This 177-nucleotide RNA was probed chemically with DMS and 2A3. High 2A3 reactivity points to a flexible backbone, as in loops and unpaired stretches. DMS adducts were read by reverse transcription with MarathonRT. The DMS profile rests on 5,408 reads. Conditions: 150 mM KOAc, 10 mM MgCl2 and 150 mM bicine (pH 8.5), 24 C. It was measured as part of the RMDB library OK1LIB.
[RMDB]
RNA sequence: GGGAACGACUCGAGUAGAGUCGAAAAGGCGCGCUUUAAGCUUGUUGGAAAAAUCCUCUGUAACAUGGCAUUUGAAGCGAUUCUCAGUGGCUACGGAAAAAGAUUUGAUCAAGAAAGUUACAGAAGGUGUACGACAUAGUUUCGACUAUGUCGUACAAAAAGAAACAACAACAACAAC
Reactivity to DMS in 0.01 (KOAc 150mM, MgCl2 10mM, bicine 150mM(pH8.5), 24C), signal-to-noise 3, nucleotides 027 to 126: g020g000c040g000c000g000c020u000u010u020a050a050g020c100u000u010g010u010u010g000g000a020a060a070a080a080u050c020c000u000c010u000g000u010a010a010c010a110u030g010g000c120a100u020u020u040g010a080a030g000c080g010a110u000u000c030u010c010a110g000u020g000g000c040u000a050c080g010g000a030a070a070a120a050g010a050u030u010u050g020a120u010c060a070a080g000a070a090a070g010u000u000a010c010a010g000a060a040g000g010
Reactivity to 2A3 in 0.01 (KOAc 150mM, MgCl2 10mM, bicine 150mM(pH8.5), 24C), signal-to-noise 2, nucleotides 027 to 126: g040g000c030g000c010g010c050u020u090u290a090a000g010c010u070u000g000u000u000g110g010a190a000a040a000a000u020c000c000u000c010u000g000u000a000a040c040a100u120g080g000c050a070u000u000u200g050a080a020g090c010g080a060u170u000c040u010c020a080g180u080g200g000c030u030a030c060g040g000a010a090a040a000a060g020a050u210u160u160g060a060u120c040a010a010g120a220a150a000g000u010u000a000c000a000g070a110a010g080g000